[RMDB]
RNA sequence: GGGAACGACUCGAGUAGAGUCGAAAAUGUGCUCCCUCCUAUCAAUUUGAGGGUGUUGGGAAUGCCUAAGUUUAUUGUCAAGGAUAAAGUCAAACAGUGACUGGGGACACAAGCCACUGUGUUAUAGACUGAAAACCACAUUCGUGUGGUUUUCAGUAAAAGAAACAACAACAACAAC
Reactivity to 2A3 in 0.01 (KOAc 150mM, MgCl2 10mM, bicine 150mM(pH8.5), 24C), signal-to-noise 2, nucleotides 027 to 126: u100g000u040g040c050u020c010c000c000u010c010c000u080a160u190c010a050a080u030u010u150g010a070g000g010g000u020g050u000u060g130g020g030a030a040u040g000c000c010u040a070a070g070u110u060u090a080u030u070g070u060c070a040a030g050g000a040u080a210a090a000g000u010c030a000a050a140c030a120g080u030g070a010c010u040g000g030g000g000a010c000a000c030a050a040g020c000c020a060c050u070g040u000g060u150u060a110u050a070g060
Reactivity to DMS in 0.01 (KOAc 150mM, MgCl2 10mM, bicine 150mM(pH8.5), 24C), signal-to-noise 2, nucleotides 027 to 126: u010g030u000g010c120u000c030c000c030u000c000c040u010a130u010c060a040a050u000u000u010g000a220g000g000g000u000g010u010u020g030g030g040a100a070u000g020c010c010u000a110a150g030u060u020u000a030u000u000g000u000c090a090a050g010g050a080u000a020a050a040g000u010c070a110a120a030c100a070g020u010g000a010c000u000g000g000g020g010a100c020a010c060a040a070g000c040c030a030c060u000g010u000g020u040u010a110u030a140g000